RNA sequence: GGGAACGACUCGAGUAGAGUCGAAAAAAGCGCCGAUUCAUAUCAGCGCGACUAUGCUCUCGCUGCCUAAGCGAUGGCUAGUCUGUCAGACCGGGAACGCCCUCGUCCCGGAGCCUGGCAUCAGCUAGAGGGAUCUACCGAUGGGUUCGGUCGCGGGCUAACAUGCUCACUUCGGUGAGCAUGUUAGAAAAGAAACAACAACAACAAC
Reactivity to 2A3 in 0.01 (KOAc 150mM, MgCl2 10mM, bicine 150mM(pH8.5), 24C), signal-to-noise 1, nucleotides 027 to 156: a000a010g000c000g040c050c020g020a050u180u160c080a080u280a020u240c040a000g000c000g000c010g000a000c000u020a040u300g000c000u000c000u000c030g000c000u040g000c040c130u120a040a020g000c000g000a000u030g000g020c000u000a010g010u020c020u010g010u000c000a000g000a020c010c000g040g000g000a040a000c070g070c040c000c020u030c000g000u000c000c020c020g010g000a010g070c020c020u040g000g000c000a070u050c060a120g180c040u070a040g000a000g020g030g000a020u020c030u080a030c000c000g040a070u070g260g130g080u090u090c060g010g010u040c020g000c070g090g040g020

The data come from the RNA Mapping Database (RMDB), library RSTRND. This 207-nucleotide RNA was probed chemically with 2A3. Conditions: 150 mM KOAc, 10 mM MgCl2 and 150 mM bicine (pH 8.5), 24 C. The 2A3 profile rests on 821 reads.